[RMDB]
RNA sequence: GGGAACGACUCGAGUAGAGUCGAAAAAAGGCCUACCAUGAGUAUAAAAUCUCAAUGGUCAAGGUGGAGUUCGUCUCCGAGGCCUCUUCCACCUCUUCAGGGUCGAUCGCUUACGAGCUUGAUCCCCUCAAGUACAGUCUUUCGAGACUGUACUUGAAAAAGAAACAACAACAACAAC
Reactivity to 2A3 in 0.01 (KOAc 150mM, MgCl2 10mM, bicine 150mM(pH8.5), 24C), signal-to-noise 9, nucleotides 027 to 126: a000a000g010g000c000c000u000a000c000c000a000u000g010a010g030u060a060u080a250a150a090a140u060c010u000c050a080a210u020g010g010u040c100a100a080g110g050u180g040g020a020g000u100u230c170g150u130c090u000c000c010g000a020g000g000c000c010u000c000u030u000c000c010a090c010c040u090c020u130u120c060a040g020g020g020u080c060g020a040u030c020g000c020u030u040a060c190g040a020g020c020u100u190g050a030u060c000c000c000c000
Reactivity to DMS in 0.01 (KOAc 150mM, MgCl2 10mM, bicine 150mM(pH8.5), 24C), signal-to-noise 5, nucleotides 027 to 126: a060a010g000g000c000c000u030a170c000c000a030u010g000a020g010u000a300u020a020a060a160a060u020c000u000c000a080a060u000g000g020u000c110a110a070g000g020u020g020g000a020g010u020u040c200g000u040c000u010c020c010g010a030g010g010c020c000u000c080u000u030c010c060a130c200c050u010c080u010u000c080a070g000g000g020u000c090g000a030u000c060g010c010u000u010a160c110g020a020g010c000u030u030g020a040u000c030c000c000c040

An RNA of 177 nucleotides, treated with 2A3 and DMS and read out base by base. Values cover nucleotides 27 to 126. The reactions ran in a buffer of 150 mM KOAc, 10 mM MgCl2 and 150 mM bicine (pH 8.5), at 24 C. DMS adducts were read by reverse transcription with MarathonRT.